RNA sequence: GGGAACGACUCGAGUAGAGUCGAAAACUAUUACUUUGACUAAAAGAUGUCUUUCAUGAUCAUCUAAAUUAGGGAGUAACAUGAGAGGAAAAACGUGAUGGAAUAUUACACUGGGACCAAACUCUAGGUUGCUAGUUUGAUUCGUCAAACUAGCAACAAAAGAAACAACAACAACAAC
Reactivity to 2A3 in 0.01 (KOAc 150mM, MgCl2 10mM, bicine 150mM(pH8.5), 24C), signal-to-noise 4, nucleotides 027 to 126: c020u010a090u110u000a050c050u040u050u100g090a090c010u010a000a000a060a000g000a000u000g010u030c000u040u300u120c110a120u260g050a070u120c010a010u000c010u030a020a210a060u060u030a000g040g000g000a010g040u020a050a000c050a120u250g080a030g010a010g140g000a040a030a040a020a030c120g030u030g020a020u060g050g110a150a060u090a070u160u150a010c090a000c050u040g000g050g010a030c020c000a090a030a090c070u060c030u060a050g060
Reactivity to DMS in 0.01 (KOAc 150mM, MgCl2 10mM, bicine 150mM(pH8.5), 24C), signal-to-noise 2, nucleotides 027 to 126: c040u010a140u000u020a000c030u000u010u000g040a260c020u010a000a000a020a060g030a010u000g000u020c000u010u030u000c300a050u040g000a010u000c080a030u020c000u000a040a110a170u000u000a030g020g000g030a030g000u000a000a030c240a030u020g000a070g000a090g000g000a040a000a050a150a090c150g000u020g000a070u020g000g020a050a200u000a030u040u020a060c040a010c000u000g000g000g010a140c030c000a070a110a120c000u000c080u040a050g000
An RNA of 177 nucleotides, treated with 2A3 and DMS and read out base by base. For 2A3 the reverse transcriptase was SuperScript II with manganese. It was measured as part of the RMDB library OK1LIB. Reactivities are rounded to 0.1 and cut off at 0 and 3. The reactions ran in a buffer of 150 mM KOAc, 10 mM MgCl2 and 150 mM bicine (pH 8.5), at 24 C. For DMS, 2,037 sequencing reads were counted.